[RMDB]
RNA sequence: GGGAACGACUCGAGUAGAGUCGAAAAGAAAGAAAGAAAGCUGACCCUUCUGCUGACGGAUCUUGUGGAGCACCACAGUGCAGAAGGGGAGAGAAGCUUUAAAGCCGACCGUCUGGGCAGCCUUGAAAAAACGGAUUCUUCUUCGGAAGAAUCCGAACAUGCAUAUCUUGUUCGCAAGAUAUGCAUGAAAAGAAACAACAACAACAAC
Reactivity to 2A3 in 0.01 (KOAc 150mM, MgCl2 10mM, bicine 150mM(pH8.5), 24C), signal-to-noise 2, nucleotides 027 to 156: g030a000a050a020g070a050a090a010g080a060a070a000g000c040u080g090a060c000c010c000u000u000c000u000g000c020u080g030a060c050g080g000a080u140c070u100u100g010u050g040g030a100g150c090a100c110c000a010c000a020g040u040g020c000a000g000a010a000g010g010g000g010a000g010a010g000a010a010g000c000u030u060u020a100a120a000g010c000c000g010a050c000c000g040u000c030u060g000g040g000c000a000g050c000c030u050u100g090a070a120a000a010a010a000c000g020g000a000u000u000c000u000u000c000u000u030c130g070g000a000a000g000a000a000u000c000c000g010a010a000
Reactivity to DMS in 0.01 (KOAc 150mM, MgCl2 10mM, bicine 150mM(pH8.5), 24C), signal-to-noise 2, nucleotides 027 to 156: g000a140a080a070g000a170a100a110g000a050a040a080g030c000u010g010a070c000c010c000u000u010c000u000g000c010u000g000a220c120g000g000a100u000c060u000u000g040u020g000g010a160g030c230a090c020c000a020c010a110g000u000g000c010a020g000a020a020g020g000g010g000a020g010a170g010a180a040g000c030u000u000u010a040a050a100g010c010c020g030a100c020c010g000u000c060u000g010g000g000c000a060g000c020c050u000u010g000a010a070a090a100a070a210c020g020g010a050u000u000c000u000u000c000u000u020c300g030g010a020a010g000a040a010u000c000c000g040a010a040
An RNA of 207 nucleotides, treated with 2A3 and DMS and read out base by base. DMS adducts were read by reverse transcription with MarathonRT. 2A3 is a SHAPE reagent: it acylates the 2'-hydroxyl of flexible nucleotides of all four kinds. The data come from the RNA Mapping Database (RMDB), library M2RFPK. Values cover nucleotides 27 to 156.